Conditions: 150 mM KOAc, 10 mM MgCl2 and 150 mM bicine (pH 8.5), 24 C. Structure probing data (DMS and 2A3) for a 177-nucleotide construct. The DMS profile rests on 1,098 reads. The 2A3 profile rests on 777 reads. Reactivities are given for positions 27 through 126. The data come from the RNA Mapping Database (RMDB), library RFM100. DMS (dimethyl sulfate) methylates the pairing face of unpaired adenines and cytosines.
RNA sequence: GGGAACGACUCGAGUAGAGUCGAAAAACGCGCUAAGCAAUGGAGAUGAUUCUUGAGGGAAGCAAUUCUGCAGAGACAUCUCCACCCUGGGGUGGCGUCGCCAGAAUACACCGACCCGUUACAGGGAUGCAGUUCCCAAAUUCGUUUGGGAACUGCAAAAAGAAACAACAACAACAAC
Reactivity to DMS in 0.01 (KOAc 150mM, MgCl2 10mM, bicine 150mM(pH8.5), 24C), signal-to-noise 1, nucleotides 027 to 126: a180c150g040c030g000c060u050a190a130g000c040a030a200u000g000g000a000g000a000u000g000a170u040u000c000u000u000g040a250g020g070g010a030a010g000c230a000a090u000u030c060u000g000c030a300g000a040g000a080c000a000u000c000u000c000c000a040c070c050c010u000g000g000g000g060u000g000g000c010g000u000c020g090c090c080a170g000a080a090u020a090c070a040c060c000g000a170c070c000c000g000u060u070a120c030a060g000g020g000a150
Reactivity to 2A3 in 0.01 (KOAc 150mM, MgCl2 10mM, bicine 150mM(pH8.5), 24C), signal-to-noise 2, nucleotides 027 to 126: a000c020g060c000g010c130u100a150a020g000c040a000a040u020g000g000a000g000a000u050g030a070u170u040c000u010u070g020a240g140g000g000a040a000g050c050a070a120u050u000c000u060g140c070a020g000a000g010a060c000a000u010c000u030c000c000a010c000c000c000u030g050g000g000g000u100g020g000c050g020u050c040g080c050c020a000g110a090a050u100a170c040a040c110c010g060a060c000c040c000g000u040u070a060c020a000g000g040g000a000